Structure probing data (DMS and 2A3) for a 177-nucleotide construct. Conditions: 150 mM KOAc, 10 mM MgCl2 and 150 mM bicine (pH 8.5), 24 C. The DMS profile rests on 3,647 reads.
RNA sequence: GGGAACGACUCGAGUAGAGUCGAAAAGUGGCAUCAAGGUUAGGCCUGGGUCCAGGUAUGCCCAGGUAGGGUGGACGCAGCAGGACAGGAGGUCCUCAGCCCUUGCCCAGCUGCCCAGCCUGCUGUACAACAUCAGGUGGUUCGCCACCUGAUGUUGAAAAGAAACAACAACAACAAC
Reactivity to DMS in 0.01 (KOAc 150mM, MgCl2 10mM, bicine 150mM(pH8.5), 24C), signal-to-noise 3, nucleotides 027 to 126: g030u000g010g030c100a030u000c040a080a050g010g000u000u010a120g000g000c010c010u010g000g010g010u000c110c040a080g010g010u000a070u000g000c000c010c020a110g010g020u000a010g010g020g010u000g020g000a170c230g040c030a020g010c010a090g010g010a030c020a050g010g010a130g020g000u000c040c150u020c240a150g010c010c000c010u020u000g000c010c000c010a100g020c020u000g000c010c020c020a010g000c010c000u000g000c030u010g010u010a180
Reactivity to 2A3 in 0.01 (KOAc 150mM, MgCl2 10mM, bicine 150mM(pH8.5), 24C), signal-to-noise 1, nucleotides 027 to 126: g080u040g000g010c060a050u020c030a100a100g110g040u080u130a090g160g000c010c030u000g030g010g020u060c060c010a030g000g050u090a060u130g020c010c020c030a000g040g060u000a000g010g010g060u000g020g000a040c160g020c000a000g000c000a010g000g010a040c020a020g000g060a210g100g000u140c040c070u110c060a020g020c000c000c000u000u000g030c010c000c000a000g000c000u000g010c000c000c000a080g060c010c000u000g000c010u050g030u070a070